This 207-nucleotide RNA was probed chemically with DMS and 2A3.
For DMS the reverse transcriptase was MarathonRT.
[RMDB]
RNA sequence: GGGAACGACUCGAGUAGAGUCGAAAAAGGAAAAGGUUUUAAGCUCGCAAGGGUGGUAAACUGUGGUGAGGUAAGUGUAUGGGGGAAACAAAAGGAAUAAGGUUUGUUUUCAUAUGUCCAUGUCAGUGCCAACUUUCUGUCUUCUUCAUGGUCAUGAUACUUUUACGUGGUUCGCCACGUAAAAGUAAAAAGAAACAACAACAACAAC
Reactivity to DMS in 0.01 (KOAc 150mM, MgCl2 10mM, bicine 150mM(pH8.5), 24C), signal-to-noise 1, nucleotides 027 to 156: a080g000g000a050a060a110a120g000g020u000u000u000u020a200a220g000c030u010c030g040c170a110a180g000g020g010u010g030g010u000a040a050a070c060u000g040u000g040g030u010g030a060g010g070u010a060a040g040u000g050u000a100u010g000g000g000g030g000a090a030a120c040a020a060a100a040g000g050a100a130u000a060a120g040g000u010u000u000g000u010u000u000u000c040a140u000a050u020g000u010c050c010a060u020g010u010c100a040g030u000g030c030c060a060a050c120u000u000u000c060u000g040u030c080u000u000c030u000u020c020a050u000g030g010u030c030a100u010g040a280
Reactivity to 2A3 in 0.01 (KOAc 150mM, MgCl2 10mM, bicine 150mM(pH8.5), 24C), signal-to-noise 2, nucleotides 027 to 156: a000g110g020a040a120a000a020g020g000u070u070u060u080a060a000g010c050u030c060g040c060a060a050g000g000g080u030g000g000u060a070a030a040c070u060g020u110g030g030u050g000a060g000g050u110a070a040g030u010g020u060a040u120g030g000g000g000g060a040a000a000c030a030a090a010a030g090g040a060a040u090a170a050g070g010u040u010u060g010u020u080u040u000c010a000u050a040u160g030u010c010c000a010u030g040u030c050a030g010u010g080c060c010a010a010c070u070u190u010c110u030g050u020c010u100u000c000u040u000c050a000u030g020g020u000c000a020u040g060a010